[RMDB]
RNA sequence: GGGAACGACUCGAGUAGAGUCGAAAAUUGAACAAUGCUGUAAAAGACGUUAAGUCUGGCUUUACGCAAUUUUUAGCCAAUGCAUUUUCUACAGGAUAUUACUCCUUGGCACGAGAAAAUGCAGAACGAGAUAUGGAGUUUUCGAACUCCAUAUCUCAAAAGAAACAACAACAACAAC
Reactivity to DMS in 0.01 (KOAc 150mM, MgCl2 10mM, bicine 150mM(pH8.5), 24C), signal-to-noise 5, nucleotides 027 to 126: u000u000g000a050a050c120a050a060u010g020c020u000g010u010a100a070a150a040g000a010c010g010u010u040a110a230g010u000c000u000g000g010c040u000u000u010a130c300g000c020a010a010u000u000u000u010u020a130g000c020c010a100a140u000g000c000a000u000u000u000u000c000u000a130c080a020g000g000a030u000a090u000u000a140c210u000c000c000u000u010g030g000c200a100c220g000a030g000a030a020a020a010u000g000c010a050g000a070a050c250
Reactivity to 2A3 in 0.01 (KOAc 150mM, MgCl2 10mM, bicine 150mM(pH8.5), 24C), signal-to-noise 4, nucleotides 027 to 126: u010u020g010a030a020c030a020a090u090g000c030u070g030u300a110a070a040a040g010a020c030g040u150u270a180a040g000u000c020u030g010g000c000u070u060u080a020c040g010c020a030a020u000u010u010u060u150a050g050c010c020a030a040u030g000c000a010u000u010u020u000c000u010a030c010a000g010g020a020u070a100u280u220a140c060u030c020c000u030u060g140g000c130a030c200g030a010g000a010a010a010a010u000g000c000a000g000a040a020c110